[RMDB]
RNA sequence: GGGAACGACUCGAGUAGAGUCGAAAAACGUUUUGGUAACAUCUACGGUCAAUCAAGACUUAGAACAGUGUACAAGCAUUGGUUCAUCAAGGAUAAGAUGUACAGGUUCGCCAACAUCGCUUAUGAACGUUACGGUACACCCCUUUUAGUCGGAACAAACCAUGGUUAUAUUCGUAUAACCAUGGUUAAAAGAAACAACAACAACAAC
Reactivity to DMS in 0.01 (KOAc 150mM, MgCl2 10mM, bicine 150mM(pH8.5), 24C), signal-to-noise 6, nucleotides 027 to 156: a070c060g020u000u000u020u000g020g020u000a060a100c080a110u010c030u000a090c100g000g010u010c060a100a120u010c140a070a130g010a020c010u000u000a050g020a040a090c070a090g030u000g010u000a030c070a050a160g030c030a080u000u000g020g010u000u000c020a050u000c120a040a070g020g010a120u000a080a140g010a030u000g020u000a070c080a100g020g010u000u010c130g010c030c020a100a080c010a020u000c040g020c020u000u000a040u000g000a020a010c010g010u010u000a030c030g020g000u000a040c020a050c000c010c030c070u010u000u010u000a090g010u010c030g010g000a060a100c080a120
Reactivity to 2A3 in 0.01 (KOAc 150mM, MgCl2 10mM, bicine 150mM(pH8.5), 24C), signal-to-noise 7, nucleotides 027 to 156: a010c080g010u060u040u050u060g080g010u060a060a020c030a070u040c030u110a050c100g020g020u020c050a080a080u100c060a130a080g020a030c020u030u070a010g010a060a040c040a050g010u000g010u060a080c070a130a060g040c050a090u090u190g060g010u010u020c000a010u020c050a030a010g040g030a110u080a170a110g010a010u030g020u070a120c050a110g040g000u070u080c100g050c080c000a020a010c000a010u010c010g000c050u020u020a010u030g010a000a000c010g040u070u060a030c040g030g010u040a010c020a020c020c000c010c030u030u090u030u140a070g020u050c060g060g000a040a070c030a080

Description:
Conditions: 150 mM KOAc, 10 mM MgCl2 and 150 mM bicine (pH 8.5), 24 C. An RNA of 207 nucleotides, treated with DMS and 2A3 and read out base by base. Source: RMDB library OK3TST, as collected in RNAgym.